[RMDB]
RNA sequence: GGGAACGACUCGAGUAGAGUCGAAAAGAGCAGCUUAGGAUUUUAGGCUCCCCGGUGCGUCUCGAACCGCGCCGGGCCAAACCCACAGGGGCUGGCGGUCCUGUGCGGUCAAAAUCUUUCCGCUGGAAUACCUAUCCCAGUUUCGACUGGGAUAGAAGAAUACAGGACUGUUCGCAGUCCUGUAUUCAAAAGAAACAACAACAACAAC
Reactivity to 2A3 in 0.01 (KOAc 150mM, MgCl2 10mM, bicine 150mM(pH8.5), 24C), signal-to-noise 1, nucleotides 027 to 156: g020a000g010c050a010g000c030u050u090a060g170g000a100u080u060u000u050a060g010g020c020u070c000c030c000c000g000g000u000g000c020g020u050c100u110c300g090a100a070c000c010g000c000g000c000c000g000g000g000c000c000a040a010a000c000c000c000a000c000a000g010g000g000g020c010u010g020g000c000g000g030u010c000c010u000g000u010g030c240g000g030u060c040a000a000a030a050u040c020u120u100u030c000c000g020c010u010g000g070a140a080u110a120c000c010u000a010u000c000c000c000a000g000u030u070u110c180g080a030c010u000g010g020g000a000u000a000g000a000a000
This 207-nucleotide RNA was probed chemically with 2A3. Reactivities are given for positions 27 through 156. The data come from the RNA Mapping Database (RMDB), library M2RFPK. The 2A3 profile rests on 999 reads.